[RMDB]
RNA sequence: GGGAACGACUCGAGUAGAGUCGAAAAGCCAUGAGUUUCGACUCAUGGCAAAAGCGCGUCAGCGCUACGAUGCUAGCGCAAGCGCGUCCAUCGUAAAUGACAAAAUUCUCGGGUUCGCCCGAGAAAACCCUAUGUCAUGUUUCGACAUGACAUAGGGAAAAGAAACAACAACAACAAC
Reactivity to 2A3 in 0.01 (KOAc 150mM, MgCl2 10mM, bicine 150mM(pH8.5), 24C), signal-to-noise 3, nucleotides 027 to 126: g020c000c000a000u000g000a000g010u050u060u180c160g030a020c000u010c010a000u000g000g000c000a000a000a020a060g000c000g000c000g070u110c060a060g010c000g000c000u000a000c020g220a230u250g040c160u000a010g000c000g000c020a040a040g030c030g010c000g010u040c020c000a120u110c040g110u120a110a140a160u190g070a050c070a040a080a020a150u060u000c000u000c000g000g000g040u020u040c210g060c010c010c010g000a010g010a030a010a000a000
Reactivity to DMS in 0.01 (KOAc 150mM, MgCl2 10mM, bicine 150mM(pH8.5), 24C), signal-to-noise 3, nucleotides 027 to 126: g020c010c000a020u000g000a030g020u000u000u000c260g000a040c010u000c000a020u000g010g010c000a000a030a030a130g000c000g000c010g030u000c130a300g000c000g020c000u000a010c010g010a180u020g050c200u000a020g010c010g030c020a040a220g000c030g020c020g020u000c040c010a140u020c120g020u000a030a180a130u000g000a080c160a100a080a050a090u010u000c000u000c000g000g000g020u010u020c230g010c000c000c000g000a020g000a010a020a010a130